[RMDB]
Overview:
Structure probing data (2A3 and DMS) for a 177-nucleotide construct. For 2A3, 7,880 sequencing reads were counted. Conditions: 150 mM KOAc, 10 mM MgCl2 and 150 mM bicine (pH 8.5), 24 C. It was measured as part of the RMDB library TTRDES.
RNA sequence: GGGAACGACUCGAGUAGAGUCGAAAAGAUAUGGAUAUCUCCGUCUGCGAUGAAACUAGUCGGAAACGACUAGUGGAGCAGGCGGAGAGUAUCCUAAGUCAAAACGUAAUUACUUCGGUAAUUACGAGACAUAUUUUUUCUUCGGAAAAAAUAUGUCAAAAGAAACAACAACAACAAC
Reactivity to 2A3 in 0.01 (KOAc 150mM, MgCl2 10mM, bicine 150mM(pH8.5), 24C), signal-to-noise 4, nucleotides 027 to 126: g030a020u090a060u200g000g000a000u020a030u000c010u000c010c000g000u000c010u010g000c010g300a300u040g010a010a010a010c000u000a000g000u000c000g020g010a100a070a060c000g010a000c000u010a000g000u010g000g000a010g000c040a000g010g010c010g000g010a000g000a000g000u000a000u000c000c000u010a180a010g080u020c070a070a000a110a150c010g000u000a000a000u010u000a010c000u030u070c300g130g010u000a020a000u000u000a000c010g000a000
Reactivity to DMS in 0.01 (KOAc 150mM, MgCl2 10mM, bicine 150mM(pH8.5), 24C), signal-to-noise 2, nucleotides 027 to 126: g000a050u000a300u000g000g000a010u000a020u000c000u000c000c000g040u000c000u010g020c010g000a120u020g000a220a130a020c010u000a010g010u000c000g020g000a130a100a240c000g030a020c000u000a000g000u000g000g000a040g010c000a010g020g000c010g000g010a000g010a000g010u010a000u000c000c000u010a050a170g010u020c020a090a080a130a300c010g010u000a000a010u000u000a010c000u000u010c260g020g010u000a010a010u000u000a000c000g000a080